Structure probing data (2A3 and DMS) for a 177-nucleotide construct.
For DMS the reverse transcriptase was MarathonRT.
It was measured as part of the RMDB library 15KREP.
2A3 is a SHAPE reagent: it acylates the 2'-hydroxyl of flexible nucleotides of all four kinds.
High DMS reactivity at an A or C suggests that its Watson-Crick edge is free.
The DMS profile rests on 1,509 reads.

RNA sequence: GGGAACGACUCGAGUAGAGUCGAAAAAGUAUUUGAAAGUACACUUAGGAUUACUAGAACUCUGUCAACUCAGUACUGCCGGUUCGGUAGUUGUGAGUAUGCACAAGAGGGUGUUUGUAUUACCACACUGUAUCCCAUUGUUCGCAAUGGGAUACAGAAAAGAAACAACAACAACAAC
Reactivity to 2A3 in 0.01 (KOAc 150mM, MgCl2 10mM, bicine 150mM(pH8.5), 24C), signal-to-noise 2, nucleotides 027 to 126: a000g030u020a060u030u060u130g170a110a110a010g000u030a010c030a000c050u050u020a030g050g050a100u120u020a050c010u000a010g090a150a060c010u000c010u000g040u020c000a020a020c020u020c000a000g140u030a000c010u000g030c020c010g220g020u250u300c060g000g000u030a040g010u000u030g160u000g030a030g000u030a130u040g050c080a010c010a060a110g000a040g030g010g030u050g090u020u040u020g050u030a050u040u070a070c030c040a040c010a000
Reactivity to DMS in 0.01 (KOAc 150mM, MgCl2 10mM, bicine 150mM(pH8.5), 24C), signal-to-noise 2, nucleotides 027 to 126: a060g020u000a040u000u010u010g010a130a080a180g000u000a030c050a070c090u000u010a090g020g010a120u010u010a050c020u000a090g000a090a100c020u010c000u010g000u010c030a020a020c010u000c010a040g040u000a010c010u000g000c010c010g000g020u010u000c090g020g020u000a010g000u000u000g000u000g000a010g000u010a090u000g010c210a000c010a050a110g010a000g000g000g050u000g000u000u010u000g000u000a050u010u010a160c040c030a080c210a120